[RMDB]
RNA sequence: GGGAACGACUCGAGUAGAGUCGAAAAUAGUGUGUUUUAUGUUGUAAAGAAUAGUACAGCUUUUCCAUUUGAAACACUUUCAGCAUGUCGUGCGUAUUUGGAUUCACGCACGACACAGCAGUUAACAUCCAACUAUGUACUUCGGUACAUAGUUGGAAAAAGAAACAACAACAACAAC
Reactivity to DMS in 0.01 (KOAc 150mM, MgCl2 10mM, bicine 150mM(pH8.5), 24C), signal-to-noise 3, nucleotides 027 to 126: u000a090g000u000g010u010g000u000u000u000u000a070u000g010u010u000g010u000a030a080a140g020a090a120u010a080g020u010a050c110a040g020c010u000u000u010u000c010c000a120u000u010u000g010a020a040a010c020a030c020u000u000u000c090a080g020c020a300u010g000u010c000g040u000g010c000g000u000a090u000u000u030g010g010a180u000u000c210a010c000g000c000a000c000g000a010c020a020c070a070g020c020a090g020u000u000a050a070c210a130
Reactivity to 2A3 in 0.01 (KOAc 150mM, MgCl2 10mM, bicine 150mM(pH8.5), 24C), signal-to-noise 1, nucleotides 027 to 126: u140a000g060u030g000u020g010u060u020u000u000a040u040g030u030u010g020u010a040a010a030g060a180a090u060a060g040u050a020c010a010g000c000u000u030u030u000c030c000a010u050u050u150g020a020a010a020c020a000c000u040u130u120c030a010g020c020a000u000g010u000c000g030u000g000c000g020u010a080u070u130u180g200g020a080u020u150c030a000c010g000c000a020c000g000a000c010a000c010a000g030c000a020g000u040u100a050a040c050a100

The data come from the RNA Mapping Database (RMDB), library 15KREP. An RNA of 177 nucleotides, treated with DMS and 2A3 and read out base by base. For 2A3, 1,044 sequencing reads were counted.